[RMDB]
RNA sequence: GGGAACGACUCGAGUAGAGUCGAAAACAGUUACGCCUUCUUUACCGUUAUCAAGGAAGGUACUCGGCCAUGCUAAGGGAAGCAUUAUUCCUUAGGCGCAUGUCGCCGCCAGCAUGGUGUGAGGGGAAAAAGUAUGCUGGGUUCGCCCAGCAUACAAUCAUGAACGAAGGUUCGCCUUCGUUCAUGAAAAAGAAACAACAACAACAAC
Reactivity to DMS in 0.01 (KOAc 150mM, MgCl2 10mM, bicine 150mM(pH8.5), 24C), signal-to-noise 2, nucleotides 027 to 156: c030a090g000u000u000a040c050g020c000c000u000u000c010u000u000u000a130c060c070g010u020u000a080u010c120a040a030g010g010a040a010g010g020u000a050c000u000c000g020g010c000c000a010u010g000c000u010a150a160g000g000g010a060a060g020c230a170u030u000a150u010u000c010c010u000u000a070g020g030c000g020c040a150u020g000u000c030g020c000c010g040c090c070a040g000c000a030u000g020g030u000g000u000g020a070g000g000g010g000a040a060a050a120a180g000u000a000u000g000c000u000g010g010g030u000u010c240g020c000c000c000a000g000c000a000u000a000c000a060a100
Reactivity to 2A3 in 0.01 (KOAc 150mM, MgCl2 10mM, bicine 150mM(pH8.5), 24C), signal-to-noise 4, nucleotides 027 to 156: c050a000g050u150u180a060c080g000c000c000u020u010c020u040u100u110a190c080c110g220u130u170a170u260c100a040a010g020g000a000a000g000g000u030a030c000u000c020g030g000c000c000a000u000g000c000u030a060a030g000g000g020a000a000g030c050a150u060u060a130u130u140c000c000u030u100a070g000g000c000g010c060a170u250g080u300c030g010c030c000g040c040c010a000g000c000a010u010g040g010u100g120u160g040a030g000g020g000g070a000a070a000a090a010g000u000a000u000g000c000u000g000g000g010u020u010c060g060c030c000c000a010g000c000a000u000a000c010a000a010